[RMDB]
RNA sequence: GGGAACGACUCGAGUAGAGUCGAAAAGAAAGUGUAGGCAUAGCUUGGCCCAAAGGAACCGAACCAUGUCAGGUAGGGAUACACCCAUGUUUAAUGCAGUGGGAUUUAGUUAACUGACCACGCUAAAGGUGAUAUAAUGAUUCGUCAUUAUAUCACCAAAAGAAACAACAACAACAAC
Reactivity to DMS in 0.01 (KOAc 150mM, MgCl2 10mM, bicine 150mM(pH8.5), 24C), signal-to-noise 9, nucleotides 027 to 126: g010a070a060a060g010u000g010u000a070g010g010c040a050u000a080g010c030u000u000g010g020c020c010c030a060a110a110g010g010a080a080c070c040g010a070a090c060c040a050u000g010u000c060a050g000g010u000a090g000g000g000a120u000a060c130a110c020c010c010a050u000g010u000u000u000a090a110u010g010c040a080g030u010g000g000g000a150u000u010u000a080g010u010u000a070a130c090u010g000a110c020c060a070c100g000c050u010a040a090a120
Reactivity to 2A3 in 0.01 (KOAc 150mM, MgCl2 10mM, bicine 150mM(pH8.5), 24C), signal-to-noise 9, nucleotides 027 to 126: g060a020a070a010g040u070g020u090a040g030g030c030a040u040a040g030c020u020u040g040g010c020c010c000a060a070a030g090g010a050a030c030c030g000a030a010c020c020a050u100g060u100c030a010g010g050u050a030g020g040g010a020u050a080c050a060c010c010c010a030u050g150u040u160u090a140a090u200g010c050a040g070u050g010g020g000a020u100u070u060a070g040u040u070a050a030c020u030g050a030c000c020a020c040g030c030u100a110a040a090